RNA sequence: GGGAACGACUCGAGUAGAGUCGAAAAUCGCGCACUCCGUCAUGGCAAUAGCUUGCAAUGAAUACAACACGGCUUGAGGCCUCCAGGAAGCAAACUGCAUCCCCGUCAGUCGCUCAUCCAAACCCAAGUUCUACUCCAAUUUCGAUUGGAGUAGAACAAAAGAAACAACAACAACAAC
Reactivity to DMS in 0.01 (KOAc 150mM, MgCl2 10mM, bicine 150mM(pH8.5), 24C), signal-to-noise 4, nucleotides 027 to 126: u020c090g000c090g030c040a090c040u000c030c060g010u000c010a050u030g010g000c010a040a070u040a110g000c130u000u000g000c040a110a050u020g000a090a040u030a070c120a060a120c060a100c060g020g000c040u010u010g010a180g010g000c010c010u000c060c050a080g010g010a130a040g010c050a060a090a090c080u000g020c030a070u010c010c010c000c020g010u020c070a030g020u000c050g000c040u020c050a040u000c040c040a040a070a110c000c010c020a080a170
Reactivity to 2A3 in 0.01 (KOAc 150mM, MgCl2 10mM, bicine 150mM(pH8.5), 24C), signal-to-noise 9, nucleotides 027 to 126: u080c020g000c000g000c030a040c030u020c010c030g100u080c040a070u090g040g010c000a020a100u070a100g060c070u020u060g010c040a050a110u110g050a110a030u170a110c030a100a020c030a040c070g040g010c010u040u070g030a030g090g050c000c010u010c020c010a020g040g040a050a000g030c050a080a060a070c040u070g010c020a100u100c010c000c000c010g040u030c010a030g020u020c020g010c020u020c010a080u020c030c000a040a060a090c010c000c010a050a020